RNA sequence: GGGAACGACUCGAGUAGAGUCGAAAACAGGUCGGACCGCGAGGAGGUGGAGAUGCCAUGCCGACCCGAAGAGGAAAGAAGGACAGGGACGCGAACCUGUGAGUGGAAACCCGCUUUAUUCACUGGGCAUCCAUUGAAACUUCGGUUUCAAUGGAUGAAAAGAAACAACAACAACAAC
Reactivity to DMS in 0.01 (KOAc 150mM, MgCl2 10mM, bicine 150mM(pH8.5), 24C), signal-to-noise 2, nucleotides 027 to 126: c090a070g010g020u000c030g020g000a200c080c110g020c120g020a060g000g020a080g010g040u000g010g000a100g000a040u000g000c030c020a090u000g020c010c010g020a070c030c000c030g000a030a040g000a160g010g000a050a050a060g010a060a060g000g010a070c070a070g000g010g000a080c070g000c080g020a070a100c030c040u000g020u000g010a040g020u000g000g000a070a080a130c060c000c060g010c130u000u000u000a070u020u000c030a060c070u000g000g010g010
Reactivity to 2A3 in 0.01 (KOAc 150mM, MgCl2 10mM, bicine 150mM(pH8.5), 24C), signal-to-noise 2, nucleotides 027 to 126: c000a020g050g070u050c020g000g020a060c020c020g000c030g030a080g020g020a020g000g090u070g030g030a060g000a030u180g020c000c000a060u100g010c010c000g020a040c000c020c020g070a080a040g050a020g060g030a100a030a070g050a020a050g040g010a010c050a020g060g010g000a010c030g010c020g070a060a070c020c000u070g000u010g070a060g030u050g010g040a120a120a100c020c010c000g050c010u090u110u090a170u090u090c090a010c070u020g000g000g030